Background: The record gives the reactivity of an RNA of 177 nucleotides to DMS and 2A3. Values cover nucleotides 27 to 126. 2A3 adducts were read by reverse transcription with SuperScript II with manganese. The DMS profile rests on 3,648 reads. Source: RMDB library OK2TRN, as collected in RNAgym. For DMS the reverse transcriptase was MarathonRT.

RNA sequence: GGGAACGACUCGAGUAGAGUCGAAAACGUGGCUGAGCAAGCAGCUCGCACUUGGUCCACGGCCAGACAUUCUGGCCGGCGCGGGAGUGUGGGUGACUCUUUGUAUGGCGGCUGCCGGGCUCGCCCGGCUGAGGUCUCUCUUCGGAGAGACCUCAGCAAAAGAAACAACAACAACAAC
Reactivity to DMS in 0.01 (KOAc 150mM, MgCl2 10mM, bicine 150mM(pH8.5), 24C), signal-to-noise 4, nucleotides 027 to 126: c080g040u010g020g030c020u020g020a030g030c020a300a150g010c040a110g000c020u010c060g030c010a060c060u000u000g010g010u000c030c090a230c030g000g000c010c000a010g020a230c210a220u010u010c010u000g000g020c000c010g010g010c170g020c070g000g010g010a040g010u000g020u000g010g010g010u000g000a080c040u010c040u000u000u000g000u010a070u010g010g020c030g010g020c040u010g000c000c030g000g010g010c040u000c110g010c020c000c030g000
Reactivity to 2A3 in 0.01 (KOAc 150mM, MgCl2 10mM, bicine 150mM(pH8.5), 24C), signal-to-noise 3, nucleotides 027 to 126: c030g070u190g040g000c140u260g010a000g020c010a010a010g010c000a030g010c080u150c130g000c000a130c060u020u120g110g030u070c040c030a030c030g000g000c010c000a020g010a090c130a170u240u110c000u000g000g000c000c000g000g010c080g010c050g030g060g030a070g010u080g010u130g040g110g070u170g050a010c010u040c000u100u150u220g160u100a190u110g110g030c000g000g030c020u050g000c020c020g110g300g000c020u020c000g010c010c000c000g030